Source: RMDB library OK3TST, as collected in RNAgym.
The record gives the reactivity of an RNA of 207 nucleotides to DMS and 2A3.
The RNA was probed in 150 mM KOAc, 10 mM MgCl2 and 150 mM bicine (pH 8.5) at 24 C.
For 2A3, 1,185 sequencing reads were counted.
RNA sequence: GGGAACGACUCGAGUAGAGUCGAAAACAGUGGAGGACCAUUGCUCCAAUCAUUGGAAGAACAGCGGCCCAGUGCUUAGAACACUAUGAAUUUCUUCUGUAAGUGAGUCUUCAGAAAGAGCAUAGAAUAUAUGUAUAUGUUCUGAAAGAGGCUGAAAUAUGAUUUUAGUCUUCGGACUAAAAUCAUAAAAAGAAACAACAACAACAAC
Reactivity to DMS in 0.01 (KOAc 150mM, MgCl2 10mM, bicine 150mM(pH8.5), 24C), signal-to-noise 2, nucleotides 027 to 156: c050a120g030u000g000g020a150g040g000a110c040c070a130u010u000g010c020u000c020c030a050a160u000c100a160u020u000g030g020a150a090g000a070a080c060a050g030c070g000g010c030c000c030a090g020u000g010c030u010u000a160g000a090a060c010a030c000u000a070u000g030a110a140u010u000u000c010u000u000c040u000g030u000a060a100g000u020g010a080g010u000c010u000u000c010a060g010a180a100a030g000a040g010c010a030u030a000g000a130a180u000a190u000a110u000g000u000a200u000a020u000g000u000u000c000u000g000a070a120a130g000a080g000g030c020u000g000a040a100a190
Reactivity to 2A3 in 0.01 (KOAc 150mM, MgCl2 10mM, bicine 150mM(pH8.5), 24C), signal-to-noise 2, nucleotides 027 to 156: c040a010g060u040g050g020a060g000g060a020c090c000a190u050u130g000c010u030c020c030a060a080u180c090a050u020u130g050g020a080a040g040a160a060c040a040g060c010g010g010c000c000c000a020g030u020g040c030u060u030a020g050a080a000c020a030c040u030a060u090g040a060a090u140u110u020c010u030u000c000u030g140u130a050a070g030u030g190a020g020u010c000u030u040c070a010g000a010a030a000g020a000g040c000a010u000a010g060a120a010u150a020u020a030u140g000u040a090u010a020u100g020u030u000c000u010g010a060a050a010g040a020g000g010c000u020g030a040a020a010